The record gives the reactivity of an RNA of 177 nucleotides to 2A3 and DMS.
Reactivities are given for positions 27 through 126.
High DMS reactivity at an A or C suggests that its Watson-Crick edge is free.
The reactions ran in a buffer of 150 mM KOAc, 10 mM MgCl2 and 150 mM bicine (pH 8.5), at 24 C.
DMS adducts were read by reverse transcription with MarathonRT.
[RMDB]
RNA sequence: GGGAACGACUCGAGUAGAGUCGAAAAUGCCUGGAGAAGUUUGACACCAAAUUCAAAUUGGUGUUAGGGGAGCUGGGGCCUUUCAAGCGAGAGCUUUGUAGAGGCGAUCGUUUUGACUACUUUGGAACAGGAAAGGUAUGUUCGCAUAUCUUUUCUGAAAAGAAACAACAACAACAAC
Reactivity to 2A3 in 0.01 (KOAc 150mM, MgCl2 10mM, bicine 150mM(pH8.5), 24C), signal-to-noise 9, nucleotides 027 to 126: u090g050c000c010u030g040g030a100g010a090a070g060u090u160u130g010a000c010a000c000c000a010a040a060u200u130c050a040a080a150u050u020g000g000u000g000u000u010a010g000g010g000g000a030g010c030u040g020g000g040g000c010c000u030u090u040c020a010a000g000c000g010a020g010a010g030c010u070u060u090g180u150a080g020a030g090g000c010g000a030u010c010g000u020u030u060u100g030a030c030u070a020c010u130u050u090g060g010a070a040
Reactivity to DMS in 0.01 (KOAc 150mM, MgCl2 10mM, bicine 150mM(pH8.5), 24C), signal-to-noise 9, nucleotides 027 to 126: u030g010c020c010u010g000g000a080g000a090a100g000u010u020u010g010a020c020a020c000c000a000a020a120u040u040c300a080a110a120u010u000g000g010u000g010u000u000a040g000g000g000g000a070g010c030u000g000g000g000g010c040c060u000u010u000c020a030a020g000c010g000a060g000a300g000c000u000u010u020g020u030a070g010a050g000g000c020g000a070u010c040g010u000u010u010u010g010a060c240u010a070c070u000u010u010g010g010a120a220